[RMDB]
RNA sequence: GGGAACGACUCGAGUAGAGUCGAAAACGUCUCCAGCCUCGAGACGGUCAUCGGUAACGUUACCCCGGUCAUCGAGUCCAUCGGCUCCAGCAUGGCCACACUGGGACCCCAGCUCGGCGGCAUGAUGCCUACGAAGUAUCUUCGGAUACUUCGUAGGAAAAGAAACAACAACAACAAC
Reactivity to DMS in 0.01 (KOAc 150mM, MgCl2 10mM, bicine 150mM(pH8.5), 24C), signal-to-noise 5, nucleotides 027 to 126: c130g010u000c020u000c020c070a180g000c060c040u010c070g010a050g010a060c090g010g000u000c070a060u010c050g010g010u000a080a140c060g010u000u010a160c030c010c010c040g050g020u000c030a030u000c040g000a050g010u000c020c110a100u010c110g010g010c020u000c030c130a070g020c090a070u000g010g010c040c040a080c100a050c020u000g000g000g010a060c020c010c030c110a130g000c040u000c020g020g010c100g000g020c030a050u010g010a100u000g000
Reactivity to 2A3 in 0.01 (KOAc 150mM, MgCl2 10mM, bicine 150mM(pH8.5), 24C), signal-to-noise 4, nucleotides 027 to 126: c020g030u020c020u020c020c040a030g020c000c010u030c030g050a020g010a030c050g010g050u060c040a170u160c060g060g010u080a110a160c080g040u060u200a300c020c010c000c020g040g000u040c020a020u020c020g020a010g030u000c060c010a220u180c140g030g000c010u030c040c020a070g000c050a050u050g040g000c020c010a010c010a000c020u000g000g000g050a030c000c000c000c000a030g010c010u020c010g010g000c050g020g020c010a020u100g020a050u140g060
The record gives the reactivity of an RNA of 177 nucleotides to DMS and 2A3. For DMS the reverse transcriptase was MarathonRT. For 2A3, 6,591 sequencing reads were counted. For 2A3 the reverse transcriptase was SuperScript II with manganese. Source: RMDB library OK2TRN, as collected in RNAgym. Conditions: 150 mM KOAc, 10 mM MgCl2 and 150 mM bicine (pH 8.5), 24 C.